[RMDB]
RNA sequence: GGGAACGACUCGAGUAGAGUCGAAAAGCAACGAUGGCACGCAGUUCGAACCGCGACUGCGUUCUUAUAACGCUUGGCUAUAAUAAACAUCUAUCUAUCCGUAGCGUCACAAUGUGUAAUUAGCCGAUAGGCGCCGUUAUUUCGAUAACGGCGCCUAAAAAGAAACAACAACAACAAC
Reactivity to DMS in 0.01 (KOAc 150mM, MgCl2 10mM, bicine 150mM(pH8.5), 24C), signal-to-noise 2, nucleotides 027 to 126: g000c050a130a100c090g000a070u010g000g020c080a020c000g000c000a010g000u040u010c040g000a110a140c080c190g010c180g000a000c000u010g010c000g000u020u000c000u040u020a080u050a130a100c150g060c090u010u030g000g040c000u000a030u030a000a010u070a030a230a010c000a020u010c050u000a000u000c010u000a020u000c070c030g000u000a130g000c200g030u010c040a030c230a110a050u000g010u000g000u010a030a090u080u000a020g010c010c000g010a200
Reactivity to 2A3 in 0.01 (KOAc 150mM, MgCl2 10mM, bicine 150mM(pH8.5), 24C), signal-to-noise 3, nucleotides 027 to 126: g040c010a000a050c000g110a060u060g020g000c000a000c030g040c000a020g000u050u050c020g040a170a110c100c000g130c060g060a000c000u000g000c030g000u000u000c000u000u200a130u040a010a020c070g010c000u060u090g040g000c000u000a000u000a240a170u140a030a130a020c030a000u030c010u090a040u130c020u070a070u030c060c040g100u060a020g060c000g060u040c000a020c010a150a200u110g060u030g000u050a160a090u190u010a100g000c010c000g010a040
The data come from the RNA Mapping Database (RMDB), library RFM100.
Chemical mapping of a 177-nucleotide RNA with DMS and 2A3.
For 2A3 the reverse transcriptase was SuperScript II with manganese.
For DMS the reverse transcriptase was MarathonRT.